The data come from the RNA Mapping Database (RMDB), library OK2TST. Chemical mapping of a 177-nucleotide RNA with DMS and 2A3. The 2A3 profile rests on 3,174 reads. DMS adducts were read by reverse transcription with MarathonRT.
RNA sequence: GGGAACGACUCGAGUAGAGUCGAAAAAGCACACCGCACUAUAUCGAAGUAACGGAACCAAGCUACUCGAAACCUUAGAAAACUUAGAUGUAGAAAUUCAAGAAAUCACAGCAGCUGCUAAGCAGCGCGAAAGAGUCCAAUUCGUUGGACUCUUUCGAAAAGAAACAACAACAACAAC
Reactivity to DMS in 0.01 (KOAc 150mM, MgCl2 10mM, bicine 150mM(pH8.5), 24C), signal-to-noise 4, nucleotides 027 to 126: a080g010c060a060c060a110c050c040g010c090a140c010u000a030u010a060u000c040g010a110a080g010u010a080a080c090g000g000a090a100c090c070a050a090g010c040u000a050c040u000c030g010a090a120a070c070c030u000u010a090g010a080a080a080a050c070u000u000a100g000a060u010g000u000a080g000a080a060a100u000u000c080a040a090g000a080a030a050u010c040a060c130a090g010c070a080g020c010u000g000c010u020a090a100g010c000a010g030c030g010
Reactivity to 2A3 in 0.01 (KOAc 150mM, MgCl2 10mM, bicine 150mM(pH8.5), 24C), signal-to-noise 3, nucleotides 027 to 126: a010g040c030a020c000a010c020c000g060c010a020c040u040a010u020a020u170c020g050a060a010g020u030a070a030c020g020g040a040a010c030c010a040a020g010c000u040a030c020u010c030g030a100a080a070c010c000u030u030a050g070a080a130a000a020c020u060u050a040g010a060u060g000u030a040g040a110a100a010u160u070c020a080a000g100a120a120a040u110c080a020c010a100g130c040a010g000c030u080g000c000u030a060a100g030c000a000g010c020g020